The data come from the RNA Mapping Database (RMDB), library RFM100. The record gives the reactivity of an RNA of 177 nucleotides to 2A3 and DMS. The reactions ran in a buffer of 150 mM KOAc, 10 mM MgCl2 and 150 mM bicine (pH 8.5), at 24 C. In probing experiments dimethyl sulfate is read out at A N1 and C N3, which are open when not base-paired. DMS adducts were read by reverse transcription with MarathonRT.
RNA sequence: GGGAACGACUCGAGUAGAGUCGAAAAAACAAAAGAAAUUAAGCGUUUUCAAAAAAAGAGAAAUGGGGAAUGAGAGAUGGGAACGAUUGUUUGCCAAGACUGUAACGAAGCCAUUCAUUACUUUGAGGUUUGCUCAAAAUUUCGAUUUUGAGCAAACAAAAGAAACAACAACAACAAC
Reactivity to 2A3 in 0.01 (KOAc 150mM, MgCl2 10mM, bicine 150mM(pH8.5), 24C), signal-to-noise 2, nucleotides 027 to 126: a000a000c150a030a080a030a070g130a000a100a030u240u150a080a090g060c040g010u000u000u030u060c050a170a180a020a000a000a020a000g140a040g040a090a040a070u110g010g030g000g030a050a030u080g060a040g020a010g020a090u100g000g040g000a020a000c020g110a080u060u240g010u060u030u000g120c000c000a010a000g110a100c020u000g030u040a000a000c000g010a100a000g000c000c000a000u050u000c100a010u030u040a030c000u100u010u060g040a020g030
Reactivity to DMS in 0.01 (KOAc 150mM, MgCl2 10mM, bicine 150mM(pH8.5), 24C), signal-to-noise 2, nucleotides 027 to 126: a070a030c090a110a070a100a070g000a020a080a090u060u090a170a080g000c140g010u020u000u040u050c030a040a010a140a040a050a020a120g000a120g010a090a000a070u000g000g010g000g010a110a000u020g010a080g000a030g000a100u050g040g000g000a010a060c050g030a190u020u010g010u000u010u010g010c000c030a050a040g000a070c030u020g000u000a000a000c140g020a030a040g010c170c110a090u000u000c060a100u000u000a020c050u010u000u010g010a140g000